[RMDB]
RNA sequence: GGGAACGACUCGAGUAGAGUCGAAAAGGGUCACACGGUUCAAAUUUAAAUUACGUGAAUCGCUCUGGUCCGGCCUGUCGGUUGGCUAAGUCCAGGGUUAAAACCAAAUAGAUCGACUACGCAUGUAGAACUGGUUGCGGAGGGCUUGCGGACGGGGGUUCCUUAUUUGCUUCGGCAAAUAAGGAACAAAAGAAACAACAACAACAAC
Reactivity to 2A3 in 0.01 (KOAc 150mM, MgCl2 10mM, bicine 150mM(pH8.5), 24C), signal-to-noise 1, nucleotides 027 to 156: g070g010g030u000c020a040c000a010c060g010g020u030u040c010a070a100a200u070u120u300a100a180a090u240u140a120c120g000u030g060a050a070u050c040g050c020u000c000u000g000g000u050c040c060g060g000c010c000u000g000u040c020g030g010u010u040g030g020c040u120a180a020g010u030c010c000a000g070g020g080u120u190a010a040a040a020c020c030a020a010a000u050a000g040a060u020c050g070a050c010u020a010c060g040c130a070u100g070u120a060g000a060a040c060u090g030g100u070u040g000c020g000g080a030g020g040g010c000u050u040g010c070g010g010a030c010g010g000g000g010